Source: RMDB library M2PK90, as collected in RNAgym.
The record gives the reactivity of an RNA of 177 nucleotides to 2A3 and DMS.
RNA sequence: GGGAACGACUCGAGUAGAGUCGAAAAGACAAAUGCUGCAUAUUAGGCUAAGCAGGAAAGGGACGGUAGCUCCUGGUGUCAGUUCAUACGGUGUGAUGCAUCUGCGUCGUGCACACAUGCACCCAAAUAAAUGAUAUGCGUUCGCGCAUAUCAUUUAAAAAGAAACAACAACAACAAC
Reactivity to 2A3 in 0.01 (KOAc 150mM, MgCl2 10mM, bicine 150mM(pH8.5), 24C), signal-to-noise 3, nucleotides 027 to 126: g040a020c030a020a100a000u080g020c010u020g000c010a040u060a100u230u190a070g030g050c010u090a060a050g010c020a020g050g050a100a030a050g060g000g000a020c040g080g030u060a020g040c020u030c010c000u020g060g000u020g030u040c020a030g020u000u090c040a050u070a130c080g040g000u020g020u020g060a140u050g010c000a020u030c030u070g050c020g080u130c020g010u040g000c010a010c000a000c000a040u050g000c010a100c000c010c040a040a070a040
Reactivity to DMS in 0.01 (KOAc 150mM, MgCl2 10mM, bicine 150mM(pH8.5), 24C), signal-to-noise 4, nucleotides 027 to 126: g010a080c070a040a090a090u010g010c030u000g010c060a070u010a100u010u000a070g020g010c080u010a070a100g030c030a030g000g020a060a070a090g010g000g010a050c070g010g000u000a070g010c070u000c020c030u010g000g010u010g000u000c040a040g010u000u000c070a060u010a110c110g000g010u000g000u010g000a100u010g010c010a020u000c070u010g000c130g000u010c110g010u000g000c010a020c050a030c050a030u000g010c060a110c000c020c040a040a080a110